[RMDB]
RNA sequence: GGGAACGACUCGAGUAGAGUCGAAAAGAAAAGAAAGAAAAAGAAAAAGUGCACAAAGAAAGUUGGUCACGUAGCCCGCAGUGGACGUGACCAAUCUGCGGGCAGUGCAAAAAGAAAGAAAAGAAAAAUUACCUACCCUGUUCGCAGGGUAGGUAAUAAAAGAAACAACAACAACAAC
Reactivity to 2A3 in 0.01 (KOAc 150mM, MgCl2 10mM, bicine 150mM(pH8.5), 24C), signal-to-noise 2, nucleotides 027 to 126: g120a000a050a010a000g070a020a010a000g100a010a130a000a000a000g160a010a110a000a000a010g160u010g000c020a000c030a090a110a000g040a050a100a010g000u000u000g000g000u010c010a000c050g020u030a030g090c000c040c020g300c110a100g000u270g140g000a000c010g030u030g000a000c000c000a000a010u000c000u000g000c030g000g000g000c080a040g040u020g000c000a000a140a000a020a000g080a060a110a000g070a070a130a010a020g050a030a020a030a000
Reactivity to DMS in 0.01 (KOAc 150mM, MgCl2 10mM, bicine 150mM(pH8.5), 24C), signal-to-noise 2, nucleotides 027 to 126: g030a060a050a060a030g010a110a060a070g010a040a040a010a180a130g010a040a020a090a130a150g030u000g020c000a040c050a040a180a060g020a120a020a020g020u010u000g000g010u000c000a000c000g010u000a160g000c020c000c050g030c200a120g030u040g030g010a050c030g000u010g010a000c000c010a000a000u010c010u000g000c220g000g010g000c120a090g000u020g010c050a030a010a060a050a040g010a110a050a060g000a020a070a090a040g020a030a100a080a120